[RMDB]
RNA sequence: GGGAACGACUCGAGUAGAGUCGAAAAGAUAUGGAUAACUUCGAUAAGAUGCCAUCGGAAACGAUGGGCAUCUUUUGACGAAGUGUCCUAAGUCAAACUCCAUAACACCUUCGGGUGUUAUGGAGAACAACCGUAUUGGCUUCGGCCAAUACGGUUGAAAAGAAACAACAACAACAAC
Reactivity to DMS in 0.01 (KOAc 150mM, MgCl2 10mM, bicine 150mM(pH8.5), 24C), signal-to-noise 2, nucleotides 027 to 126: g000a040u010a290u010g010g000a000u010a040a000c010u000u000c010g010a160u000a040a030g020a000u000g010c000c000a030u000c000g020g000a110a080a130c010g020a010u000g040g010g000c010a000u000c000u000u000u010u010g040a190c160g010a010a020g020u000g020u000c000c000u000a060a110g010u010c030a140a090a220c010u000c000c000a030u000a010a010c000a000c000c000u000u000c140g020g010g020u000g000u000u000a000u000g000g010a000g000a040a080
Reactivity to 2A3 in 0.01 (KOAc 150mM, MgCl2 10mM, bicine 150mM(pH8.5), 24C), signal-to-noise 1, nucleotides 027 to 126: g030a020u070a030u070g000g030a030u100a300a240c000u030u010c010g010a040u040a290a030g000a000u020g000c020c000a000u010c000g000g070a050a000a010c020g000a000u020g040g070g050c010a000u010c020u000u010u010u010g030a010c010g010a000a000g000u010g000u020c000c000u000a090a000g000u010c060a080a050a140c010u010c010c000a010u010a000a000c000a000c010c000u040u140c300g100g010g010u010g010u010u010a000u000g010g000a000g010a000a010
Source: RMDB library TTRDEL, as collected in RNAgym. This 177-nucleotide RNA was probed chemically with DMS and 2A3. Conditions: 150 mM KOAc, 10 mM MgCl2 and 150 mM bicine (pH 8.5), 24 C.